[RMDB]
RNA sequence: GGGAACGACUCGAGUAGAGUCGAAAAAGCGUAGCGGUACGCCGCUACGCAAGGCGCAUUUGAACUGUAUUGUACGCCGUGCAUAAAGCAAAAGUACUAAAAAAACGUGCCGUUACGACGGCACGAAAAAACAUCCAUUGGUUCGCCAAUGGAUGAACACAUAUAGUCACUUCGGUGACUAUAUGUGAAAAGAAACAACAACAACAAC
Reactivity to DMS in 0.01 (KOAc 150mM, MgCl2 10mM, bicine 150mM(pH8.5), 24C), signal-to-noise 2, nucleotides 027 to 156: a140g000c000g020u000a000g000c000g010g000u010a100c300g100c050c000g040c000u010a010c010g030c000a010a020g000g030c010g030c000a100u000u000u000g030a100a210c050u020g010u010a240u010u000g000u000a030c040g010c010c010g000u000g000c040a100u010a050a100a130g050c080a040a070a110a140g040u020a210c080u040a000a010a050a090a030a070a150c000g010u000g000c010c000g030u000u010a080c180g020a120c000g040g000c030a000c000g010a000a010a090a130a040a080c010a020u000c000c010a030u010u000g000g000u010u000c300g030c000c000a010a000u000g000g000a010u000g000a020a110
Reactivity to 2A3 in 0.01 (KOAc 150mM, MgCl2 10mM, bicine 150mM(pH8.5), 24C), signal-to-noise 5, nucleotides 027 to 156: a000g010c000g010u000a000g010c000g000g010u030a030c200g040c030c000g010c000u000a010c000g000c000a000a000g000g000c020g000c030a080u090u090u270g170a170a100c080u080g040u190a100u160u110g020u050a020c020g000c020c010g000u030g000c030a110u140a280a130a030g010c000a010a010a040a020g040u080a050c080u190a010a060a050a040a000a010a070c010g000u000g000c000c000g000u000u040a050c240g020a000c000g060g000c020a010c000g000a000a000a000a000a010a000c000a000u000c010c000a000u000u010g010g010u020u030c140g020c070c000a000a000u020g000g000a000u000g010a010a000

Source: RMDB library M2RFPK, as collected in RNAgym.
The record gives the reactivity of an RNA of 207 nucleotides to DMS and 2A3.
The reactions ran in a buffer of 150 mM KOAc, 10 mM MgCl2 and 150 mM bicine (pH 8.5), at 24 C.
Values cover nucleotides 27 to 156.